This 177-nucleotide RNA was probed chemically with 2A3 and DMS. Reactivities are given for positions 27 through 126. It was measured as part of the RMDB library OK2TST. Conditions: 150 mM KOAc, 10 mM MgCl2 and 150 mM bicine (pH 8.5), 24 C.
RNA sequence: GGGAACGACUCGAGUAGAGUCGAAAAGCGUGUUUGAGCGGGUGUUACGCGAGCUGGGGUUUAACGUUCGCAGCUUGUUAGGGCGGGUAGUGUUAUCAAAUCCGCCAGCAUUACCGCCGCGCACCCAGACCCCUAGUAGUUUCGACUACUAGGGGUCAAAAGAAACAACAACAACAAC
Reactivity to 2A3 in 0.01 (KOAc 150mM, MgCl2 10mM, bicine 150mM(pH8.5), 24C), signal-to-noise 1, nucleotides 027 to 126: g010c000g010u090g070u100u230u300g140a070g020c020g000g000g030u000g040u060u120a080c080g000c020g030a000g000c000u020g000g000g130g030u040u030u080a120a030c060g010u010u010c180g010c190a000g020c000u030u060g020u050u140a130g040g070g000c020g040g040g000u050a100g000u070g100u300u090a110u220c060a150a000a100u010c010c010g000c000c010a000g030c000a010u010u120a080c000c000g000c010c010g000c010g000c000a000c000c000c010a040
Reactivity to DMS in 0.01 (KOAc 150mM, MgCl2 10mM, bicine 150mM(pH8.5), 24C), signal-to-noise 1, nucleotides 027 to 126: g010c040g020u000g000u000u010u000g040a130g030c020g060g020g010u000g000u000u000a140c130g010c030g010a030g000c000u000g000g040g020g010u020u000u020a130a180c300g010u010u000c030g010c000a030g020c020u000u000g010u000u000a080g020g020g030c010g010g010g030u010a090g000u000g010u010u020a120u000c130a040a090a050u000c010c010g000c010c040a080g010c010a030u000u000a220c020c000g030c000c000g000c040g020c000a030c000c000c040a260